[RMDB]
RNA sequence: GGGAACGACUCGAGUAGAGUCGAAAAACACCUCCCAGGUCCUCGUGUGUACCUGGUUGAGAGGCUCAUUGCUUGUGAAAAUCCAUUCAUGGUUAACCAAUUGGCUUAUAGCUCUAGUGCAAAUGGCGCUGAGAUAAUGGUUCGCCAUUAUCUCAGCAAAAGAAACAACAACAACAAC
Reactivity to 2A3 in 0.01 (KOAc 150mM, MgCl2 10mM, bicine 150mM(pH8.5), 24C), signal-to-noise 1, nucleotides 027 to 126: a030c020a030c020c000u000c000c000c000a010g000g020u050c030c000u110c100g130u130g000u020g010u120a010c000c000u000g000g000u090u160g060a060g000a040g030g030c000u030c030a080u010u150g000c010u030u090g020u000g050a070a040a000a030u000c000c010a030u000u170c070a050u030g000g030u050u090a010a050c030c000a060a120u090u030g000g020c030u100u100a060u030a090g060c000u000c040u090a080g030u040g050c020a060a050a160u070g010g000c030
Reactivity to DMS in 0.01 (KOAc 150mM, MgCl2 10mM, bicine 150mM(pH8.5), 24C), signal-to-noise 2, nucleotides 027 to 126: a070c140a200c070c010u000c000c020c010a020g000g000u000c030c040u000c300g020u020g020u000g040u000a050c010c010u000g010g010u000u000g000a070g000a070g000g000c050u000c080a110u000u000g000c080u010u000g030u020g000a040a060a120a060u010c010c020a090u020u000c210a070u000g010g000u000u010a150a120c070c020a080a120u010u000g000g000c110u010u010a080u020a100g010c030u000c030u010a060g010u030g010c070a040a080a050u020g020g010c130
An RNA of 177 nucleotides, treated with 2A3 and DMS and read out base by base. The DMS profile rests on 1,088 reads. Values cover nucleotides 27 to 126. For 2A3, 1,055 sequencing reads were counted.